The record gives the reactivity of an RNA of 177 nucleotides to DMS and 2A3.
DMS adducts were read by reverse transcription with MarathonRT.
For 2A3 the reverse transcriptase was SuperScript II with manganese.
Conditions: 150 mM KOAc, 10 mM MgCl2 and 150 mM bicine (pH 8.5), 24 C.
Source: RMDB library OK2TRN, as collected in RNAgym.
Reactivities are rounded to 0.1 and cut off at 0 and 3.
For DMS, 1,260 sequencing reads were counted.

[RMDB]
RNA sequence: GGGAACGACUCGAGUAGAGUCGAAAAUACUAGCGUCAUGCACUAGCAUGGCUAGGAUAUGGUACAGCUGAGCUAGUCCAUGCUAGCAUGAUCCUAGGUACCUAGUGAUCUCAGUACGGAUCCUGCGUAGCCGUUUGGGGUUCGCCCCAAACGGCUAAAAAGAAACAACAACAACAAC
Reactivity to DMS in 0.01 (KOAc 150mM, MgCl2 10mM, bicine 150mM(pH8.5), 24C), signal-to-noise 2, nucleotides 027 to 126: u000a080c000u000a000g050c300g000u000c000a000u000g000c140a180c130u000a010g010c000a020u000g000g010c000u000a000g010g030a130u010a100u000g000g010u000a110c300a130g060c030u000g000a160g020c000u000a010g000u010c020c000a010u000g000c000u000a010g030c020a030u000g000a000u000c300c000u000a010g000g000u000a050c020c000u010a030g000u020g020a020u000c010u000c120a160g000u020a090c240g000g000a080u000c000c020u000g000c080g030
Reactivity to 2A3 in 0.01 (KOAc 150mM, MgCl2 10mM, bicine 150mM(pH8.5), 24C), signal-to-noise 1, nucleotides 027 to 126: u140a010c000u000a000g000c000g060u010c000a010u020g040c070a040c140u040a000g010c010a010u020g000g060c020u000a000g000g010a050u090a110u140g060g000u210a210c100a110g000c020u040g070a030g080c000u000a000g040u070c010c000a000u000g000c000u010a000g020c000a000u010g010a000u050c000c010u000a000g010g000u000a040c000c000u030a070g030u110g260a020u030c090u050c080a080g060u140a050c070g010g000a000u000c020c020u100g060c050g100